[RMDB]
RNA sequence: GGGAACGACUCGAGUAGAGUCGAAAAGGCGCGCGCCAGGUACGCCCCGACGGCGUUGGCGCGGGCCGCGGCCGUGUCCUGGCCCUCGAACAGCGGCCACGCGGAGAUGUCGGUGGGCGGCUCGUCGACUUGGUGCCAACUUCGGUUGGCACCAAGUAAAAGAAACAACAACAACAAC
Reactivity to 2A3 in 0.01 (KOAc 150mM, MgCl2 10mM, bicine 150mM(pH8.5), 24C), signal-to-noise 1, nucleotides 027 to 126: g020g000c020g010c000g030c000g000c060c000a080g000g110u080a070c000g000c000c010c040c150g210a190c070g020g000c000g080u010u000g090g060c000g000c000g000g070g000c000c000g000c010g000g000c000c000g010u080g040u190c110c000u040g020g020c000c040c070u040c050g060a180a080c060a130g020c010g000g050c000c000a120c130g110c020g030g070a050g030a080u100g030u010c000g050g000u160g070g000g000c060g020g020c060u010c010g080u000c000g000